[RMDB]
RNA sequence: GGGAACGACUCGAGUAGAGUCGAAAAGUGGUGACUAGAAUCUUCUCUUUGGCCUGUCAGAAAGGCAGAGCUUCACCAUAGGGACAGCUCUUUGAGAUGACACCUGCCAACCUCUCUAUAUGGAUGGGGACGCAGAGUUCAGAGAGGCUGGAGACUCUCUGUGCUGGGUAUUCGUACCCAGCACAGAAAAAGAAACAACAACAACAAC
Reactivity to 2A3 in 0.01 (KOAc 150mM, MgCl2 10mM, bicine 150mM(pH8.5), 24C), signal-to-noise 1, nucleotides 027 to 156: g000u000g010g000u010g020a020c100u170a040g050a240a210u090c050u100u000c000u080c000u120u030u150g050g000c030c000u060g020u090c040a160g300a260a140a030g020g040c000a000g000a040g010c030u090u080c050a080c000c010a070u050a120g060g000g040a010c030a030g050c010u000c060u050u030u130g000a040g010a080u070g030a080c060a010c030c000u000g040c010c000a060a000c000c000u030c000u040c000u110a170u090a080u300g150g000a090u170g020g090g010g000a010c000g010c030a020g060a010g080u040u060c020a000g000a000g000a010g110g000c040u010g020g000a050g040a060c000u010c010
An RNA of 207 nucleotides, treated with 2A3 and read out base by base.
Conditions: 150 mM KOAc, 10 mM MgCl2 and 150 mM bicine (pH 8.5), 24 C.